[RMDB]
Structure probing data (2A3) for a 207-nucleotide construct. The RNA was probed in 150 mM KOAc, 10 mM MgCl2 and 150 mM bicine (pH 8.5) at 24 C. Values are in units of 0.01, from 0 to 300, in steps of 10. Source: RMDB library RNAMAK, as collected in RNAgym.

RNA sequence: GGGAACGACUCGAGUAGAGUCGAAAACGCUGGGCCAGGUGAGGUCGAUUCGAGAGACUGAAGCGCGCACGGUCUCGAUGAGAAUGACCCUGAAUCCUGGCCUGUGCUGAAGCGCGCACGGCAACCGAAAGGUGCGGAUGAGUACAUUCGUGUACUCCUAGGCUAGCUUAUUCGUAAGCUAGCCUAGAAAAGAAACAACAACAACAAC
Reactivity to 2A3 in 0.01 (KOAc 150mM, MgCl2 10mM, bicine 150mM(pH8.5), 24C), signal-to-noise 1, nucleotides 027 to 156: c020g000c020u010g010g000g000c030c010a000g000g000u000g020a010g020g050u060c090g060a080u000u000c020g010a020g000a000g010a020c000u030g040a150a050g010c000g000c010g030c010a000c010g000g010u000c000u000c000g200a300u050g010a000g000a000a020u010g000a000c040c000c020u010g090a060a000u010c000c000u050g020g000c080c010u010g000u010g000c000u000g010a120a060g000c000g000c000g010c000a010c000g000g010c000a020a010c010c000g010a070a020a040g010g000u020g000c000g020g060a150u150g000a070g000u000a000c010a060u060u150c300g110u100g000u030a000c000u000c000